Structure probing data (2A3 and DMS) for a 177-nucleotide construct. The data come from the RNA Mapping Database (RMDB), library M2PK50. Conditions: 150 mM KOAc, 10 mM MgCl2 and 150 mM bicine (pH 8.5), 24 C.
RNA sequence: GGGAACGACUCGAGUAGAGUCGAAAAGCAGUCGGCUUCGGCCGACUGCAAAUUGAUCGGGCUACUAGAACAAAAACUAGAACAUAGAUCUAGUGUAGUUGAAAAUACGGGGGUUCGCCCCCGUAAACGAUACUUACUCUUUCGAGAGUAAGUAUCGAAAAGAAACAACAACAACAAC
Reactivity to 2A3 in 0.01 (KOAc 150mM, MgCl2 10mM, bicine 150mM(pH8.5), 24C), signal-to-noise 1, nucleotides 027 to 126: g000c030a010g000u020c010g020g000c110u120u190c300g100g080c020c050g000a000c000u010g000c000a000a000a000u010u040g070a060u060c090g030g070g090c030u080a070c020u070a150g100a270a100c080a070a150a040a040a000c020u010a020g000a030a000c010a110u160a120g150a160u050c000u000a030g030u000g020u070a080g020u020u040g060a060a040a000a020u040a000c010g000g000g000g080g000u020u010c180g100c000c020c000c000c000g000u000a020a000a000
Reactivity to DMS in 0.01 (KOAc 150mM, MgCl2 10mM, bicine 150mM(pH8.5), 24C), signal-to-noise 3, nucleotides 027 to 126: g010c000a000g010u000c000g030g030c010u000u000c230g030g030c010c000g010a010c010u000g000c020a010a020a060u010u000g010a080u000c040g020g000g010c020u000a030c040u010a040g000a090a060c080a060a070a100a140a080c000u000a010g010a050a060c100a120u000a130g000a080u000c000u000a040g010u000g000u000a050g020u000u000g000a060a080a120a120u000a000c000g010g020g020g020g010u010u020c200g010c000c000c000c010c010g000u010a000a030a100